[RMDB]
An RNA of 177 nucleotides, treated with DMS and 2A3 and read out base by base. It was measured as part of the RMDB library OK2TRN. The reactions ran in a buffer of 150 mM KOAc, 10 mM MgCl2 and 150 mM bicine (pH 8.5), at 24 C. For 2A3 the reverse transcriptase was SuperScript II with manganese.
RNA sequence: GGGAACGACUCGAGUAGAGUCGAAAAUGGUUUUCUGGAUAAGACCAGAUUCUCUACCAACAUGGAUUGACUUUAAAUUCCUAGGGAAGGGAACAUUAAAAUCCUGUCAAGAUUUGGGGCUCCUCAACGACAAGGAUAGCUUCGGCUAUCCUUGUCGAAAAGAAACAACAACAACAAC
Reactivity to DMS in 0.01 (KOAc 150mM, MgCl2 10mM, bicine 150mM(pH8.5), 24C), signal-to-noise 1, nucleotides 027 to 126: u000g030g020u000u000u010u000c080u020g000g050a150u000a060a080g020a110c010c000a030g000a130u000u010c060u000c030u000a200c000c020a090a060c210a100u000g000g000a060u010u010g000a050c220u000u000u010a030a030a100u000u010c000c000u020a200g010g020g020a070a130g000g000g000a040a030c150a060u000u060a050a060a000a060u010c030c000u030g000u000c150a100a190g000a160u000u000u000g020g000g010g000c030u010c040c000u000c130a040a150
Reactivity to 2A3 in 0.01 (KOAc 150mM, MgCl2 10mM, bicine 150mM(pH8.5), 24C), signal-to-noise 1, nucleotides 027 to 126: u060g020g000u040u090u000u010c030u070g080g020a040u020a240a050g070a070c000c010a000g000a060u000u010c050u000c000u040a070c000c000a060a010c070a120u060g120g000a040u040u060g060a020c040u150u090u120a040a210a060u130u110c020c020u040a030g080g050g020a030a000g020g000g020a000a010c020a020u120u150a050a030a040a040u000c000c000u030g020u060c070a100a050g010a210u050u050u120g050g000g060g080c040u050c100c000u020c040a090a090